[RMDB]
RNA sequence: GGGAACGACUCGAGUAGAGUCGAAAAGAUAUGGAAUCAGGUGAGCUAGCGAUGUAUUCGGAAACGAAUAACUCGCUUGGACCUCACUGAUUCCUAAGUCAAACGCGUAUCGUUCGCGAUACGCGAAGUGUCCAUAUUACUUCGGUAAUAUGGACACAAAAGAAACAACAACAACAAC
Reactivity to DMS in 0.01 (KOAc 150mM, MgCl2 10mM, bicine 150mM(pH8.5), 24C), signal-to-noise 3, nucleotides 027 to 126: g000a020u000a300u000g000g000a010a030u000c000a030g030g000u000g000a000g020c050u010a050g020c000g010a010u010g010u000a030u000u000c010g020g020a120a070a240c010g010a010a010u000a040a050c040u010c000g000c010u020u000g040g010a150c300c020u010c000a040c000u000g000a010u000u000c000c000u000a040a080g000u010c010a080a130a300c010g010c000g000u010a000u000c000g010u010u010c280g020c020g010a020u000a000c000g000c000g020a000a030
Reactivity to 2A3 in 0.01 (KOAc 150mM, MgCl2 10mM, bicine 150mM(pH8.5), 24C), signal-to-noise 4, nucleotides 027 to 126: g020a010u070a050u120g010g000a010a000u010c020a030g260g210u080g060a010g040c090u190a030g000c040g030a050u180g000u060a020u000u010c000g020g020a070a060a040c010g020a020a010u030a090a090c010u010c000g000c000u020u070g040g080a040c030c010u000c010a010c000u000g000a000u010u000c000c000u010a090a010g040u000c050a140a040a060c020g000c010g000u010a000u010c010g030u070u070c300g010c010g090a010u000a000c000g010c000g020a050a010
Source: RMDB library TTRDES, as collected in RNAgym. Chemical mapping of a 177-nucleotide RNA with DMS and 2A3. The 2A3 profile rests on 11,516 reads. Reactivities are given for positions 27 through 126.